[RMDB]
RNA sequence: GGGAACGACUCGAGUAGAGUCGAAAAGAGGAGUUCGCUCCUCGCCUCUCCUAAGUCUCUUCGGGAGCAUUGCGUACGGCAAUACGAUCGGAAACGAUCGUGCCAGUGAUCAAUGCAUCGAUCGAAGAGAUAUGGACCUAAGCACGUUCGCGUGCAAGACAGUAUGUCGGUUCGCCGACAUACUGUCAAAAGAAACAACAACAACAAC
Reactivity to DMS in 0.01 (KOAc 150mM, MgCl2 10mM, bicine 150mM(pH8.5), 24C), signal-to-noise 1, nucleotides 027 to 156: g020a060g030g000a030g020u000u000c300g020c000u000c000c010u000c000g040c010c010u000c020u040c000c000u010a020a070g000u000c000u000c020u040u020c050g010g000g020a110g020c010a010u010u000g000c130g000u000a060c000g000g080c010a190a070u000a300c000g000a000u000c000g010g010a150a200a300c030g000a000u000c020g040u010g010c000c000a160g010u010g000a160u000c010a000a010u010g020c000a230u000c130g000a100u010c020g000a060a000g000a010g000a020u000a050u000g020g010a110c160c030u000a090a130g070c020a000c010g000u010u000c300g020c010g090u000g000c000a080a220
Reactivity to 2A3 in 0.01 (KOAc 150mM, MgCl2 10mM, bicine 150mM(pH8.5), 24C), signal-to-noise 7, nucleotides 027 to 156: g010a000g010g020a010g010u110u140c210g130c110u010c000c000u010c000g000c000c010u050c020u010c010c010u080a230a110g000u000c000u000c000u000u000c020g040g010g020a040g010c010a000u000u020g020c050g080u080a060c030g000g000c020a060a160u220a200c020g000a000u000c020g030g080a110a040a060c020g000a000u000c000g000u000g000c000c010a120g030u060g060a070u110c010a010a000u000g000c020a300u130c030g100a150u090c000g000a010a000g000a000g000a000u000a010u030g000g010a020c030c070u140a180a030g000c020a000c010g030u100u160c260g040c010g080u000g000c000a020a000

The record gives the reactivity of an RNA of 207 nucleotides to DMS and 2A3. DMS adducts were read by reverse transcription with MarathonRT. For DMS, 2,390 sequencing reads were counted. For 2A3, 6,761 sequencing reads were counted. Source: RMDB library RNAMAK, as collected in RNAgym. For 2A3 the reverse transcriptase was SuperScript II with manganese. The RNA was probed in 150 mM KOAc, 10 mM MgCl2 and 150 mM bicine (pH 8.5) at 24 C.